[RMDB]
RNA sequence: GGGAACGACUCGAGUAGAGUCGAAAACCAUCCUCAAACAUGAACCUUGACUCCCAGGAGUCAUCAGGUCCUCCAGGAUUAGACUGGGCUGCCAGCAAUGAUGAGGAUGAUGGAUCUAUUGAGGCAGGUACAGCUCCUACUUCGGUAGGAGCUGUACAAAAGAAACAACAACAACAAC
Reactivity to DMS in 0.01 (KOAc 150mM, MgCl2 10mM, bicine 150mM(pH8.5), 24C), signal-to-noise 1, nucleotides 027 to 126: c020c030a180u010c000c000u000c050a060a030a110c240a030u000g000a050a040c040c000u000u000g000a030c010u000c000c020c220a240g000g020a040g000u000c000a020u010c250a110g000g000u000c010c040u020c000c040a020g000g000a170u000u020a150g020a150c010u000g000g050g060c140u000g000c020c000a040g080c120a030a100u000g020a160u020g000a020g010g000a000u040g000a060u000g010g020a020u010c060u000a110u000u010g000a100g030g010c300a030g000
Reactivity to 2A3 in 0.01 (KOAc 150mM, MgCl2 10mM, bicine 150mM(pH8.5), 24C), signal-to-noise 2, nucleotides 027 to 126: c020c000a010u030c000c000u020c030a150a190a240c050a120u120g090a060a060c030c020u010u040g010a020c000u010c070c010c070a170g110g020a000g000u010c010a020u070c030a000g000g090u010c000c000u010c010c020a060g110g050a220u150u060a120g070a210c030u010g020g040g080c090u220g150c010c010a030g070c050a080a020u070g040a030u060g000a030g020g000a000u030g000a000u050g040g070a030u040c010u030a080u100u080g000a030g040g120c070a070g160
An RNA of 177 nucleotides, treated with DMS and 2A3 and read out base by base. The RNA was probed in 150 mM KOAc, 10 mM MgCl2 and 150 mM bicine (pH 8.5) at 24 C.